[RMDB]
RNA sequence: GGGAACGACUCGAGUAGAGUCGAAAAGACCCGAAGCUGGGUCGCCUGCUGGCCGUGCAGUCGGGCGAAGGUCUCGACGUGCAGACCUACAAGAUUCGUGCGGCUGACGUGCUGUUCGAUGACGCGCAGGAGGCGAGCGAGUAAUGCGCACCUACGACUUUCUGUCGAACUUCGGUUCGACAGAAAGAAAAGAAACAACAACAACAAC
Reactivity to 2A3 in 0.01 (KOAc 150mM, MgCl2 10mM, bicine 150mM(pH8.5), 24C), signal-to-noise 1, nucleotides 027 to 156: g080a020c020c020c000g010a070a030g090c130u250g010g000g040u000c000g050c000c000u020g000c020u010g040g020c080c010g040u070g120c000a000g000u010c060g020g020g000c020g030a080a020g000g030u020c000u000c050g220a270c180g090u100g040c070a000g000a020c000c020u030a160c090a160a040g040a250u000u060c020g000u020g130c000g010g000c010u020g050a050c050g060u190g020c040u110g050u130u100c060g040a080u140g030a040c030g020c000g000c060a050g010g050a050g100g000c040g000a020g000c010g010a030g020u220a040a120u150g090c020g000c050a070c000c020u030a060c170g080a010